[RMDB]
RNA sequence: GGGAACGACUCGAGUAGAGUCGAAAACAGGGGCAUCCGGUGCGGCACCGCGCCUCGGUGUCUCCGGUGGCGAAGGUUCACGCGCAGGCGUGGAGAUCAUCGCCGACACACGCGACUUGGGUGCGGGCAGUUCGCUGCCCGCCUUCCUUGAGGAAGCACUGCUCCAUAGUUUCGACUAUGGAGCAGUAAAAGAAACAACAACAACAAC
Reactivity to DMS in 0.01 (KOAc 150mM, MgCl2 10mM, bicine 150mM(pH8.5), 24C), signal-to-noise 1, nucleotides 027 to 156: c050a080g000g030g030g020c060a040u000c010c070g010g040u000g040c050g020g010c280a150c120c020g000c070g000c020c010u000c020g010g030u010g000u010c030u010c020c020g000g020u000g030g000c020g000a110a060g060g010u000u020c000a050c050g020c000g050c300a130g040g000c000g010u020g010g040a060g000a170u000c000a240u010c060g010c020c000g030a200c010a100c090a150c210g020c040g010a130c040u000u010g010g030g030u010g000c020g050g000g060c020a080g000u010u000c290g170c040u010g020c000c010c040g000c000c020u000u000c030c020u020u010g040a120g010g000a060a110g000c140
Reactivity to 2A3 in 0.01 (KOAc 150mM, MgCl2 10mM, bicine 150mM(pH8.5), 24C), signal-to-noise 1, nucleotides 027 to 156: c070a040g000g020g000g020c080a020u020c040c030g000g000u080g030c070g010g010c150a110c280c090g010c050g080c080c020u030c070g000g030u030g010u000c080u010c040c000g020g070u130g010g020c030g000a030a020g040g000u060u120c000a000c020g040c020g030c180a050g180g150c020g000u010g000g050a080g000a050u060c040a000u000c000g000c010c030g030a010c020a000c000a010c010g070c070g030a040c070u090u060g000g000g040u020g000c000g000g010g000c000a000g010u050u100c170g000c080u000g000c000c020c000g000c000c000u030u040c000c000u010u070g040a060g010g010a060a000g000c080